[RMDB]
RNA sequence: GGGAACGACUCGAGUAGAGUCGAAAACUUUUGAAAAUACACUUUGGGCCUAAAAGACAAGAUCUAGCUAUUUCAUGACAGCUCAGACCUGCCCGCCCCAUGCUGCGUGGCUUGGCGACGCACGAGACGAGUGUGUUAUCUUCGGAUAACACACUCGAAAAGAAACAACAACAACAAC
Reactivity to 2A3 in 0.01 (KOAc 150mM, MgCl2 10mM, bicine 150mM(pH8.5), 24C), signal-to-noise 2, nucleotides 027 to 126: c000u120u190u060u150g110a120a050a120a050u180a010c080a040c140u160u080u090g020g020g000c000c040u120a080a140a010a060g070a030c080a060a030g000a110u000c020u020a000g000c000u060a070u040u220u180c090a080u180g070a090c020a040g000c030u010c040a010g030a030c000c020u030g000c000c000c000g010c030c000c000c000a010u160g030c040u010g010c050g040u050g010g070c010u050u140g190g000c030g040a010c000g010c000a010c020g050a070g040a030
Reactivity to DMS in 0.01 (KOAc 150mM, MgCl2 10mM, bicine 150mM(pH8.5), 24C), signal-to-noise 2, nucleotides 027 to 126: c050u010u000u010u040g020a120a040a080a170u010a090c220a100c130u000u000u010g010g000g000c030c100u010a060a060a090a070g000a110c210a040a020g020a030u030c010u000a030g010c030u000a060u000u010u010c240a100u000g000a100c120a020g000c020u000c220a040g000a030c010c000u000g010c040c000c060g070c030c000c010c020a080u000g020c230u000g040c000g040u000g000g040c060u000u000g010g040c000g000a070c040g000c060a030c040g010a140g000a200
This 177-nucleotide RNA was probed chemically with 2A3 and DMS. For DMS the reverse transcriptase was MarathonRT. For DMS, 873 sequencing reads were counted. The data come from the RNA Mapping Database (RMDB), library OK2TST. The RNA was probed in 150 mM KOAc, 10 mM MgCl2 and 150 mM bicine (pH 8.5) at 24 C. For 2A3 the reverse transcriptase was SuperScript II with manganese.